[RMDB]
RNA sequence: GGGAACGACUCGAGUAGAGUCGAAAAGAAAAGAACGUAAAGGUGGACGCAAACGCAGCCAAGCGCGUGCGGAAGGCUGCGAAAAAGCACGCGCAAACAAAACAAAAGUGGACACCACGGAAAGAAAGCGGUAUUAAAUGUUCGCAUUUAAUACCGCAAAAGAAACAACAACAACAAC
Reactivity to DMS in 0.01 (KOAc 150mM, MgCl2 10mM, bicine 150mM(pH8.5), 24C), signal-to-noise 2, nucleotides 027 to 126: g010a140a050a080a060g000a060a020c030g040u010a050a050a060g020g040u000g000g000a060c070g000c050a010a050a060c270g000c050a100g060c040c120a060a140g000c020g010c010g030u000g030c000g000g000a300a170g000g000c000u040g070c050g020a000a030a030a300a090g000c000a010c030g000c000g000c040a220a010a090c190a020a050a100a080c060a080a070a060a150g000u000g000g000a010c000a030c020c000a100c110g050g000a050a010a090g020a020a040a130
Reactivity to 2A3 in 0.01 (KOAc 150mM, MgCl2 10mM, bicine 150mM(pH8.5), 24C), signal-to-noise 1, nucleotides 027 to 126: g130a030a070a000a000g060a050a010c060g020u100a150a070a070g070g000u040g000g020a000c000g000c000a030a030a010c050g000c040a000g040c060c040a140a020g000c000g020c020g000u000g000c000g000g020a000a030g150g000c050u110g000c010g050a190a050a000a000a000g000c020a010c000g000c010g000c000a000a100a000c000a010a010a050a010c020a010a060a000a000g000u000g000g000a010c000a020c000c000a020c020g060g020a160a000a050g100a020a130a000

An RNA of 177 nucleotides, treated with DMS and 2A3 and read out base by base. Conditions: 150 mM KOAc, 10 mM MgCl2 and 150 mM bicine (pH 8.5), 24 C. For DMS, 1,511 sequencing reads were counted. 2A3 adducts were read by reverse transcription with SuperScript II with manganese. Values cover nucleotides 27 to 126.